[RMDB]
Chemical mapping of a 207-nucleotide RNA with DMS and 2A3.

RNA sequence: GGGAACGACUCGAGUAGAGUCGAAAAAGUUCUAGUCCUCACCUAAGAUCAGACUGACACGGCCCUCAAAGAAAGAGCACUAGGUUGGGCUUUGUGGUGGGGAUAAGUGUCUCAUUUUUAGUCCCAAAUUAAAAACGAGAUUUUGGGCUGUACAUCAACGUAGUGAUGCAUUCGUGCAUCACUACGUAAAAGAAACAACAACAACAAC
Reactivity to DMS in 0.01 (KOAc 150mM, MgCl2 10mM, bicine 150mM(pH8.5), 24C), signal-to-noise 1, nucleotides 027 to 156: a080g010u000u000c020u000a200g010u000c020c000u010c020a090c040c000u010a060a110g020a060u000c020a100g010a090c050u000g010a170c080a070c000g030g030c000c070c000u000c010a060a060a190g050a100a070a020g010a080g070c070a110c120u010a090g010g020u000u010g000g010g000c010u000u010u010g020u000g010g000u000g000g000g020g000a030u000a020a160g020u000g010u010c010u020c030a090u000u000u010u000u010a060g000u010c010c040c130a070a050a180u010u020a000a010a010a030a050c020g010a050g030a110u010u000u000u000g010g020g010c080u000g030u010a130c090a090u000c070a190
Reactivity to 2A3 in 0.01 (KOAc 150mM, MgCl2 10mM, bicine 150mM(pH8.5), 24C), signal-to-noise 1, nucleotides 027 to 156: a000g060u060u010c040u010a010g000u010c000c000u000c000a010c000c000u020a060a050g010a170u070c040a060g120a170c040u150g000a000c010a010c080g060g000c060c000c000u040c040a110a180a020g080a040a080a000g060a040g000c050a010c090u110a030g040g030u050u040g000g020g010c000u050u020u070g150u030g000g000u010g000g000g000g000a000u000a000a000g000u010g000u030c000u010c080a080u100u140u010u040u150a050g130u190c000c000c000a010a010a000u060u050a090a020a020a000a000c070g050a030g050a140u070u030u000u030g010g000g000c040u020g020u110a090c060a090u140c060a050